[RMDB]
RNA sequence: GGGAACGACUCGAGUAGAGUCGAAAAGAUAUGGAUGUGUCUGAGUGGUCGAGGAUCAGUUGUCGGAAACGACAACUGGGAGACCCUCAGAGCACAUCCUAAGUCAAAACGGUACUUCGGUACCGAAGAGAGAAAUACAGUUCGCUGUAUUUCUCUCAAAAGAAACAACAACAACAAC
Reactivity to DMS in 0.01 (KOAc 150mM, MgCl2 10mM, bicine 150mM(pH8.5), 24C), signal-to-noise 5, nucleotides 027 to 126: g010a060u010a300u000g000g010a000u010g010u000g020u000c000u020g010a020g000u020g070g020u000c000g020a120g010g010a060u010c000a000g010u000u000g010u000c000g020g000a120a100a250c010g000a010c000a010a000c000u000g000g000g000a070g020a010c000c020c000u010c000a000g000a080g010c000a000c010a000u000c000c000u000a010a100g000u000c070a080a120a170a230c030g000g010u000a000c000u000u020c190g050g010u000a000c000c000g020a040a050
Reactivity to 2A3 in 0.01 (KOAc 150mM, MgCl2 10mM, bicine 150mM(pH8.5), 24C), signal-to-noise 5, nucleotides 027 to 126: g010a030u090a050u200g000g000a000u010g000u000g010u010c010u010g010a020g040u300g070g000u000c040g080a300g070g020a030u020c000a000g000u000u000g010u000c010g020g040a100a080a090c020g010a010c000a000a000c000u000g000g010g000a010g000a010c000c010c010u000c000a000g000a020g000c000a000c000a000u000c000c000u000a060a010g050u020c050a020a020a110a130c010g010g000u010a010c000u050u120c300g120g000u010a010c000c000g010a100a020
Conditions: 150 mM KOAc, 10 mM MgCl2 and 150 mM bicine (pH 8.5), 24 C. This 177-nucleotide RNA was probed chemically with DMS and 2A3. The 2A3 profile rests on 18,492 reads.